[RMDB]
RNA sequence: GGGAACGACUCGAGUAGAGUCGAAAAGGGAGGUUGACUCCCCGGCACCAAAAGGCCCUGGCCCAACUAGGUGCUCACUGAAUGAACACACAAGAGAAUGAAUGUAAGGUCAGCUGGUGGGACAGUGCAGUGAUGAGUUCUUCGGAACUCAUUAUUGAAAAGAAACAACAACAACAAC
Reactivity to 2A3 in 0.01 (KOAc 150mM, MgCl2 10mM, bicine 150mM(pH8.5), 24C), signal-to-noise 3, nucleotides 027 to 126: g010g010g030a010g070g010u200u300g100a070c000u010c000c000c000c010g050g040c050a100c040c000a050a090a030a060g080g000c030c020c030u070g110g020c020c010c000a080a050c040u030a020g090g000u020g020c020u000c000a090c000u010g000a000a170u130g030a100a000c010a000c000a000c000a090a000g010a030g040a230a090u120g040a060a020u060g030u110a040a000g010g030u000c000a010g020c040u010g000g000u010g000g000g010a020c010a010g000u010g030
Reactivity to DMS in 0.01 (KOAc 150mM, MgCl2 10mM, bicine 150mM(pH8.5), 24C), signal-to-noise 3, nucleotides 027 to 126: g000g010g000a000g010g010u040u020g000a190c000u010c000c000c000c060g000g000c090a180c000c030a050a060a120a100g010g000c000c030c030u020g010g000c010c000c010a040a050c060u010a040g000g010u010g000c030u010c050a000c000u000g000a200a220u000g000a260a130c040a010c100a060c210a100a140g000a210g000a250a130u020g010a090a060u010g000u020a070a060g010g010u000c020a030g000c020u000g010g010u000g000g000g000a050c020a020g010u010g010

Conditions: 150 mM KOAc, 10 mM MgCl2 and 150 mM bicine (pH 8.5), 24 C. The record gives the reactivity of an RNA of 177 nucleotides to 2A3 and DMS. Values are in units of 0.01, from 0 to 300, in steps of 10. For 2A3 the reverse transcriptase was SuperScript II with manganese. For DMS the reverse transcriptase was MarathonRT. Reactivities are given for positions 27 through 126. For 2A3, 2,980 sequencing reads were counted.